[RMDB]
RNA sequence: GGGAACGACUCGAGUAGAGUCGAAAAGAUAUGGAUAGUCAGGCAAGCUUCUCGGAAACGAGUAAGUGAUGACCCUGCUAUCCUAAGUCAAAACAUCUAGAAUGGGGUUCGCCCCAUUCUAGAUGAACUUUUGUCUAUACUUCGGUAUAGACAAAAGAAAAGAAACAACAACAACAAC
Reactivity to DMS in 0.01 (KOAc 150mM, MgCl2 10mM, bicine 150mM(pH8.5), 24C), signal-to-noise 3, nucleotides 027 to 126: g010a030u010a300u000g000g010a000u000a000g000u010c010a010g000g000c060a110a180g010c000u000u000c010u000c000g000g000a100a080a240c000g000a010g030u010a010a020g030u000g010a080u010g000a070c300c000c010u000g000c010u000a000u000c000c000u000a020a060g010u000c030a110a040a110a220c000a000u000c000u010a010g000a010a000u000g000g000g000g010u010u010c280g010c000c000c000c000a010u000u000c000u010a010g010a000u000g000a040a090
Reactivity to 2A3 in 0.01 (KOAc 150mM, MgCl2 10mM, bicine 150mM(pH8.5), 24C), signal-to-noise 3, nucleotides 027 to 126: g030a030u110a060u120g000g000a010u030a000g080u300c080a010g040g000c030a050a100g010c000u020u030c000u000c000g000g070a070a110a050c010g010a000g110u300a020a010g000u020g070a300u110g020a040c050c000c000u000g000c000u000a000u010c000c000u000a140a000g020u010c000a010a060a070a160c000a000u030c010u000a000g000a000a010u010g000g000g030g040u040u100c250g160c000c020c050c010a010u000u000c000u000a010g000a010u000g000a000a000